[RMDB]
RNA sequence: GGGAACGACUCGAGUAGAGUCGAAAAAAUGACCUGAGAGCAUGAGGCGAGACCCGUAGCGCAGGGCAAAACUUCCACGGGCAACUGUGGGACGGCUCUGUAAAAAAGGAGAGGGAGUUCAUGAACAGUAACUGGUAGGGUUCGCCCUACCAGUUACAAAAGAAACAACAACAACAAC
Reactivity to 2A3 in 0.01 (KOAc 150mM, MgCl2 10mM, bicine 150mM(pH8.5), 24C), signal-to-noise 2, nucleotides 027 to 126: a000a000u250g130a050c000c000u020g080a050g050a040g100c050a010u080g040a070g040g050c010g000a060g050a250c000c000c020g050u060a000g000c010g000c040a030g000g000g000c030a110a140a010a040c070u010u030c000c000a040c010g030g000g030c050a100a040c050u000g000u010g000g000g000a000c050g000g000c000u010c000u000g010u050a050a000a140a050a010a000g090g000a010g030a030g000g030g010a100g000u110u000c100a130u100g080a060a070c140a140
Reactivity to DMS in 0.01 (KOAc 150mM, MgCl2 10mM, bicine 150mM(pH8.5), 24C), signal-to-noise 2, nucleotides 027 to 126: a090a080u030g020a190c030c030u020g000a110g000a170g020c020a050u010g000a100g000g020c130g020a150g000a100c080c000c060g000u000a080g020c140g020c030a000g000g000g000c020a110a050a060a040c300u000u010c000c000a010c000g020g030g010c230a050a100c000u000g000u000g000g000g020a000c090g000g020c000u000c000u010g000u010a000a030a050a060a010a080g010g000a100g010a040g000g000g010a060g010u000u020c010a050u000g010a140a130c160a190